[RMDB]
RNA sequence: GGGAACGACUCGAGUAGAGUCGAAAACGCGGCGUUGAGCUUGGCCGUAUCGAUGGUCAGUGCGCCGUCCGUCUGCGACGACGACGAGCCGUCGGCGAACUUGAUGCCGAUCGACGCGAGCGACGUACCGUGCCAUGGCUUUCGAGCCAUGGCACGGAAAAGAAACAACAACAACAAC
Reactivity to 2A3 in 0.01 (KOAc 150mM, MgCl2 10mM, bicine 150mM(pH8.5), 24C), signal-to-noise 2, nucleotides 027 to 126: c000g040c010g020g060c010g000u000u040g070a030g040c000u070u170g050g000c000c040g040u060a170u230c090g040a090u100g000g030u010c070a030g010u130g190c020g000c010c000g020u020c000c010g150u050c090u150g090c160g040a010c030g000a000c020g000a010c010g000a100g040c020c000g060u050c020g040g000c000g040a010a100c050u070u230g070a030u300g000c000c000g000a010u030c020g010a000c000g020c010g040a060g000c010g020a070c020g070u050a110
Reactivity to DMS in 0.01 (KOAc 150mM, MgCl2 10mM, bicine 150mM(pH8.5), 24C), signal-to-noise 1, nucleotides 027 to 126: c150g010c010g020g060c000g070u000u000g000a050g000c170u000u010g030g000c070c040g030u040a050u010c080g000a030u000g000g020u000c100a170g000u000g000c000g030c070c000g050u000c020c000g010u000c170u030g000c190g000a050c040g020a040c030g000a070c020g000a300g040c010c030g020u000c000g000g020c060g000a060a090c160u020u000g060a100u000g050c020c010g010a000u020c020g050a000c000g000c030g010a130g030c000g020a070c090g000u000a240
Structure probing data (2A3 and DMS) for a 177-nucleotide construct. The DMS profile rests on 837 reads. The 2A3 profile rests on 1,462 reads. The reactions ran in a buffer of 150 mM KOAc, 10 mM MgCl2 and 150 mM bicine (pH 8.5), at 24 C. Reactivities are given for positions 27 through 126. 2A3 is a SHAPE reagent: it acylates the 2'-hydroxyl of flexible nucleotides of all four kinds.